[RMDB]
RNA sequence: GGGAACGACUCGAGUAGAGUCGAAAAGAUAUGGAUCGGUUGUCAGGCUUAACUAUCGGAAACGAUAGGGAAGCCUUGGAUUUACCGAGUCCUAAGUCAAAGAAGAUAAACUUCGGUUUAUCUUCAACCUUGGGUAAACGUUCGCGUUUACCCAAGGAAAAGAAACAACAACAACAAC
Reactivity to DMS in 0.01 (KOAc 150mM, MgCl2 10mM, bicine 150mM(pH8.5), 24C), signal-to-noise 2, nucleotides 027 to 126: g000a100u010a300u000g000g000a230u000c000g000g000u010u030g020u000c020a020g000g010c010u000u000a060a040c000u000a010u000c000g000g000a120a100a110c000g000a000u000a010g020g010g010a050a040g000c000c000u000u000g000g020a000u000u020u000a020c010c000g000a010g010u000c010c010u010a060a210g000u010c040a050a150a140g000a030a000g000a020u000a000a000a010c000u000u000c260g030g000u000u000u000a000u000c010u000u000c010a050a100

About this RNA
Chemical mapping of a 177-nucleotide RNA with DMS. The data come from the RNA Mapping Database (RMDB), library TTRDEL. The reactions ran in a buffer of 150 mM KOAc, 10 mM MgCl2 and 150 mM bicine (pH 8.5), at 24 C.